[RMDB]
RNA sequence: GGGAACGACUCGAGUAGAGUCGAAAAUGAGCCCUGGUAACGCUUGGCUCGGCUAUAAUAUAAUUAAUAGCUUUGAAUUUUUGAAGGGGUCGAGGUCGUCCUCUGGAGUGUCUGCCUACUUUAGCAGCUUCCAAUUAAUGUUCGCAUUAAUUGGAAGAAAAGAAACAACAACAACAAC
Reactivity to 2A3 in 0.01 (KOAc 150mM, MgCl2 10mM, bicine 150mM(pH8.5), 24C), signal-to-noise 3, nucleotides 027 to 126: u090g000a010g020c000c000c000u000g020g010u000a020a000c010g000c040u010u010g000g000c000u000c000g000g000c000u010a000u030a120a120u180a050u060a270a130u300u100a060a060u010a020g000c000u100u140u110g090a140a120u090u070u100u080u250g030a060a020g050g000g010g020u050c040g020a040g010g140u060c000g050u000c020c000u040c000u020g040g050a070g000u030g030u000c010u050g000c020c010u050a110c020u150u080u020a060g020c040a000g010
Reactivity to DMS in 0.01 (KOAc 150mM, MgCl2 10mM, bicine 150mM(pH8.5), 24C), signal-to-noise 3, nucleotides 027 to 126: u020g010a020g010c000c000c010u010g010g010u010a100a120c300g000c000u000u000g010g010c000u000c000g010g010c010u000a020u000a100a100u000a190u000a110a130u000u000a060a040u000a020g000c010u000u010u020g010a070a060u000u000u000u000u000g000a050a070g010g010g010g020u000c030g000a060g010g010u000c010g010u000c010c000u010c030u010g010g000a070g010u000g000u010c040u000g000c030c050u010a080c120u010u000u010a070g010c100a100g000
An RNA of 177 nucleotides, treated with 2A3 and DMS and read out base by base. The reactions ran in a buffer of 150 mM KOAc, 10 mM MgCl2 and 150 mM bicine (pH 8.5), at 24 C. For 2A3 the reverse transcriptase was SuperScript II with manganese. The data come from the RNA Mapping Database (RMDB), library RFMREP.